[RMDB]
Chemical mapping of a 177-nucleotide RNA with DMS and 2A3.
The 2A3 profile rests on 1,590 reads.
The reactions ran in a buffer of 150 mM KOAc, 10 mM MgCl2 and 150 mM bicine (pH 8.5), at 24 C.
RNA sequence: GGGAACGACUCGAGUAGAGUCGAAAAUUGGCGCGACGUCGGGACGCUUGACGCGUUUUACGACGCACAUAUGGACCUGGUGUCGGUGCACCCGGUGUUCAACCUGUACAACAAGCGGUGGCCGAUCGCGUAGUCCCAAUUUCGAUUGGGACUACGCAAAAGAAACAACAACAACAAC
Reactivity to DMS in 0.01 (KOAc 150mM, MgCl2 10mM, bicine 150mM(pH8.5), 24C), signal-to-noise 2, nucleotides 027 to 126: u000u000g000g010c060g030c000g030a110c040g000u000c030g020g000g000a020c010g000c050u010u020g010a150c280g030c000g000u010u000u000u000a180c210g010a050c000g000c060a040c070a070u010a140u000g000g000a110c000c010u010g000g010u000g040u000c050g000g060u010g000c070a030c000c000c020g020g010u010g000u020u000c130a120a060c130c100u010g040u000a110c170a060a080c090a080a080g030c150g000g000u010g020g000c020c020g050a010u000c130
Reactivity to 2A3 in 0.01 (KOAc 150mM, MgCl2 10mM, bicine 150mM(pH8.5), 24C), signal-to-noise 2, nucleotides 027 to 126: u020u040g070g000c030g010c010g080a050c010g040u070c060g050g000g010a000c010g040c040u030u130g120a050c110g000c010g070u000u000u020u050a060c060g000a010c000g020c020a000c020a010u220a080u100g070g010a070c000c010u080g000g020u080g000u060c040g010g060u120g140c010a020c000c000c010g010g050u080g000u040u040c030a070a050c020c040u070g040u160a010c010a130a020c040a260a020g040c110g050g000u030g050g050c010c000g030a050u060c080